An RNA of 207 nucleotides, treated with DMS and 2A3 and read out base by base. For 2A3, 1,255 sequencing reads were counted. The RNA was probed in 150 mM KOAc, 10 mM MgCl2 and 150 mM bicine (pH 8.5) at 24 C.
RNA sequence: GGGAACGACUCGAGUAGAGUCGAAAAGAUUUUGGCAAUAGUCCGUGUAAUCCAUAAUCCAGUAACACGAGCUGGUGCUUGCUAGACACCUUUUCAAUGUUUAAUUUUUUUGAAAUAAGCUUUGAUAAAGCCUUCCUCGCAAAUUCCGGAUACAUGAAACUUUUGUAGUUUUCGAACUACAAAAGUUAAAAGAAACAACAACAACAAC
Reactivity to DMS in 0.01 (KOAc 150mM, MgCl2 10mM, bicine 150mM(pH8.5), 24C), signal-to-noise 1, nucleotides 027 to 156: g010a150u010u000u010u000g020g030c000a100a170u010a080g030u000c030c020g050u010g050u000a120a170u000c040c000a110u000a040a090u000c040c000a090g030u010a170a110c050a050c040g020a040g030c000u000g040g040u000g010c070u000u000g020c070u000a050g030a140c200a030c030c030u010u000u000u010c000a020a070u010g000u000u020u000a020a020u000u010u010u000u040u030u030g000a010a040a040u000a060a050g000c030u000u030u000g010a120u000a050a040a090g020c030c030u000u010c020c000u010c090g020c050a060a050a300u010u000c050c060g000g020a120u000a100c060a150u000g000a220
Reactivity to 2A3 in 0.01 (KOAc 150mM, MgCl2 10mM, bicine 150mM(pH8.5), 24C), signal-to-noise 2, nucleotides 027 to 156: g050a040u110u090u080u100g030g000c030a060a080u060a210g040u030c030c030g000u030g000u060a170a140u040c030c000a060u090a080a030u060c030c020a010g020u070a160a040c040a030c150g040a060g010c010u020g010g030u020g020c010u020u020g000c010u040a060g040a030c010a080c030c000u000u050u000u030c010a010a010u010g000u000u020u090a100a150u100u070u040u010u040u150u190g030a020a020a000u030a010a010g000c000u030u020u010g060a080u100a060a010a040g010c000c020u000u030c000c000u010c000g000c010a020a050a080u140u040c060c020g010g020a040u070a030c040a010u090g070a110